Chemical mapping of a 177-nucleotide RNA with 2A3 and DMS. It was measured as part of the RMDB library OK2TRN.
[RMDB]
RNA sequence: GGGAACGACUCGAGUAGAGUCGAAAAAUUGUGGGCGGCGAGAGCGCGCUCCCGGGGGCCUGGCCCUGGCAGGUCAGCCUGCACGUCCAGAACGUCCACGUGUGCGGAGGCUCCAUCAUCACCCCCGCUCUGUCAUAUUAUUCGUAAUAUGACAGAGAAAAGAAACAACAACAACAAC
Reactivity to 2A3 in 0.01 (KOAc 150mM, MgCl2 10mM, bicine 150mM(pH8.5), 24C), signal-to-noise 5, nucleotides 027 to 126: a000u170u110g020u110g020g020g000c060g020g000c050g040a090g010a020g100c120g000c010g010c090u030c000c020c010g010g000g000g000g000c020c030u020g030g010c030c000c010u030g110g010c020a010g000g010u100c060a040g190c020c000u020g000c020a030c040g030u010c020c000a020g030a130a070c060g050u010c010c010a030c020g030u060g020u030g020c030g020g070a060g130g000c020u030c030c010a080u070c010a020u060c010a070c000c010c000c000c010g000
Reactivity to DMS in 0.01 (KOAc 150mM, MgCl2 10mM, bicine 150mM(pH8.5), 24C), signal-to-noise 8, nucleotides 027 to 126: a080u010u010g010u010g010g010g020c050g010g010c040g000a120g010a100g030c050g010c050g010c040u010c020c020c030g030g000g010g000g010c110c030u000g010g010c030c030c060u000g010g000c080a060g000g010u010c150a160g000c030c010u000g010c020a070c120g010u000c020c030a060g010a110a110c140g010u000c020c030a040c040g010u000g010u000g010c050g010g010a120g010g010c020u000c020c030a080u000c070a060u020c080a220c040c020c000c010c060g010
For DMS the reverse transcriptase was MarathonRT.